[RMDB]
RNA sequence: GGGAACGACUCGAGUAGAGUCGAAAACUGCAGGCUGGGCACGAAGCCCCCACCGGGCGCUCCCCUCGGCGGGCCGUCCGUUGGGUUCACACCCCCAGGCCGCGGGCCGGCUGCUCUUCUUUCUCUUCAGGAUAAGCCUUCGGGCUUAUCAAAAGAAACAACAACAACAAC
Reactivity to 2A3 in 0.01 (KOAc 150mM, MgCl2 10mM, bicine 150mM(pH8.5), 24C), signal-to-noise 9, nucleotides 027 to 129: c040u030g010c020a050g130g040c000u120g020g030g020c040a020c090g040a040a010g020c000c030c010c010c000a010c010c010g010g010g000c010g010c080u230c000c000c010c030u150c110g280g010c180g010g000g000c040c000g010u000c000c000g000u020u020g010g000g000u110u100c070a100c010a050c050c010c000c000c000a030g060g040c010c030g010c020g020g000g010c020c000g020g000c000u020g020c010u000c000u170u030c000u020u150u010c010u000c000u080u110c060a040g090
Reactivity to DMS in 0.01 (KOAc 150mM, MgCl2 10mM, bicine 150mM(pH8.5), 24C), signal-to-noise 9, nucleotides 027 to 129: c050u040g010c040a060g040g030c090u000g020g010g040c060a040c030g000a120a100g050c080c060c020c010c010a000c040c010g060g000g020c030g000c060u040c010c010c000c040u050c190g050g040c110g020g010g010c300c010g000u000c030c000g030u040u000g020g020g010u020u040c020a160c150a220c040c010c010c000c030a090g040g000c020c110g040c070g020g030g000c000c010g010g010c050u030g000c030u040c020u060u020c060u010u070u020c020u020c020u020u070c160a110g040
Structure probing data (2A3 and DMS) for a 170-nucleotide construct. Source: RMDB library 15KLIB, as collected in RNAgym. High DMS reactivity at an A or C suggests that its Watson-Crick edge is free. For 2A3 the reverse transcriptase was SuperScript II with manganese.